[RMDB]
RNA sequence: GGGAACGACUCGAGUAGAGUCGAAAAGAUAUGGAGAGAUGUUGGGAGCUGGAUAUCGGAAACGAUAUCCCAGCAUCGAUCAAUGUCUCUCCUAAGUCAAAAGGUCGAACAGUUCGCUGUUCGACCAGUACAUUCUAGCCUUCGGGCUAGAAUGUACAAAAGAAACAACAACAACAAC
Reactivity to 2A3 in 0.01 (KOAc 150mM, MgCl2 10mM, bicine 150mM(pH8.5), 24C), signal-to-noise 1, nucleotides 027 to 126: g010a000u020a000u050g010g010a000g000a000g000a000u040g020u020u020g050g120g070a300g020c020u000g000g000a000u010a000u010c000g000g000a000a000a000c010g000a000u010a010u050c240c050c000a010g000c000a030u300c200g010a100u000c000a000a000u010g000u000c000u010c010u060c010c000u010a010a000g010u000c020a030a000a080a170g000g000u000c010g000a010a000c000a010g060u180u220c300g070c230u010g000u000u020c020g020a010c000c000a020
Reactivity to DMS in 0.01 (KOAc 150mM, MgCl2 10mM, bicine 150mM(pH8.5), 24C), signal-to-noise 1, nucleotides 027 to 126: g000a000u000a110u010g000g000a000g000a030g010a010u020g040u000u010g000g020g020a190g030c000u000g000g000a030u000a000u000c000g010g000a050a060a070c010g010a010u000a020u000c090c040c020a000g010c000a130u000c270g040a150u000c000a010a000u000g030u000c000u010c010u000c010c010u000a000a040g000u000c020a070a000a180a120g010g010u000c000g010a000a000c000a010g000u010u020c300g000c010u010g030u000u000c000g010a000c000c000a010
This 177-nucleotide RNA was probed chemically with 2A3 and DMS. Conditions: 150 mM KOAc, 10 mM MgCl2 and 150 mM bicine (pH 8.5), 24 C. The DMS profile rests on 1,211 reads. For 2A3 the reverse transcriptase was SuperScript II with manganese. Reactivities are given for positions 27 through 126.